Chemical mapping of a 207-nucleotide RNA with 2A3 and DMS. Values cover nucleotides 27 to 156. DMS adducts were read by reverse transcription with MarathonRT.

[RMDB]
RNA sequence: GGGAACGACUCGAGUAGAGUCGAAAAUGUCCGCCGUCGCGGCCUGACCGUCGAAUCCAGUCAGGGCAAGACCGGCCAGGUCACCGUCGAAACCGGCGUGGACCGGCGCACAGGGGAGAUUCGCGAACAGACCCUGACCACCCUGGAGACGACCGAAAGGUGCAUAAUUAUUCGUAAUUAUGCACCUAAAAGAAACAACAACAACAAC
Reactivity to 2A3 in 0.01 (KOAc 150mM, MgCl2 10mM, bicine 150mM(pH8.5), 24C), signal-to-noise 4, nucleotides 027 to 156: u080g040u030c010c010g000c040c080g200u150c130g000c030g020g030c010c020u030g030a060c000c020g020u020c020g000a030a050u030c010c010a020g090u050c010a010g000g000g000c040a080a010g040a080c030c040g040g000c000c000a090g000g000u030c030a050c100c000g030u040c010g060a200a150a220c170c040g000g000c010g010u090g000g000a020c010c000g000g000c060g010c020a100c030a090g010g000g060g000a140g030a170u190u160c100g030c050g080a080a040c040a070g150a300c000c010c000u020g000a000c020c020a070c040c010c010u000g010g010a020g000a010c010g000a010c010c070g140a140a080
Reactivity to DMS in 0.01 (KOAc 150mM, MgCl2 10mM, bicine 150mM(pH8.5), 24C), signal-to-noise 2, nucleotides 027 to 156: u010g010u000c050c000g050c010c100g030u010c040g080c060g050g000c000c010u020g020a100c070c030g000u000c010g000a150a230u000c030c020a120g020u000c080a040g000g010g030c030a040a190g020a020c000c010g010g010c020c010a070g060g020u000c020a050c030c020g000u000c020g010a090a230a120c250c020g030g010c000g020u000g010g000a040c010c010g030g000c040g010c070a140c040a060g000g000g020g030a220g000a190u000u000c030g030c000g030a100a100c030a300g000a080c000c000c000u000g000a100c050c060a130c060c070c010u000g000g020a200g020a300c030g030a090c010c060g000a060a200